The record gives the reactivity of an RNA of 177 nucleotides to DMS and 2A3.
2A3 is a SHAPE reagent: it acylates the 2'-hydroxyl of flexible nucleotides of all four kinds.
DMS adducts were read by reverse transcription with MarathonRT.
For DMS, 15,414 sequencing reads were counted.

[RMDB]
RNA sequence: GGGAACGACUCGAGUAGAGUCGAAAAUGAAUCGAAUGAUAAUGCUCUUGACACCUGGCUUUCUUAAGAAUUUGACAUCACAGGGACAUCCAGAUGUCAAAGUUACAGCCCCAAGUAGCUGAACCUGCCCUAGUAACUAUUUCGAUAGUUACUAGGGAAAAGAAACAACAACAACAAC
Reactivity to DMS in 0.01 (KOAc 150mM, MgCl2 10mM, bicine 150mM(pH8.5), 24C), signal-to-noise 9, nucleotides 027 to 126: u010g010a130a080u010c050g000a110a080u010g010a050u010a090a120u000g010c020u000c030u000u000g010a100c110a080c120c100u010g010g000c060u000u000u000c070u000u000a080a100g010a090a110u000u000u010g000a030c030a010u000c010a070c270a170g000g000g010a100c240a100u010c010c020a090g000a010u000g000u000c000a010a010a020g000u000u000a060c130a040g010c040c030c150c030a050a060g010u000a020g010c020u000g000a060a110c080c050u010g010
Reactivity to 2A3 in 0.01 (KOAc 150mM, MgCl2 10mM, bicine 150mM(pH8.5), 24C), signal-to-noise 9, nucleotides 027 to 126: u100g030a020a060u060c060g050a080a110u190g040a040u080a140a050u140g020c010u000c010u030u040g020a030c020a060c100c050u020g030g000c010u080u130u050c040u140u150a120a080g040a140a120u060u020u030g010a010c020a010u020c020a030c100a210g030g000g120a120c030a060u070c020c000a000g000a020u000g010u010c000a010a010a000g000u010u040a050c030a030g010c000c010c010c000a050a040g020u080a010g080c020u030g020a030a030c000c020u060g040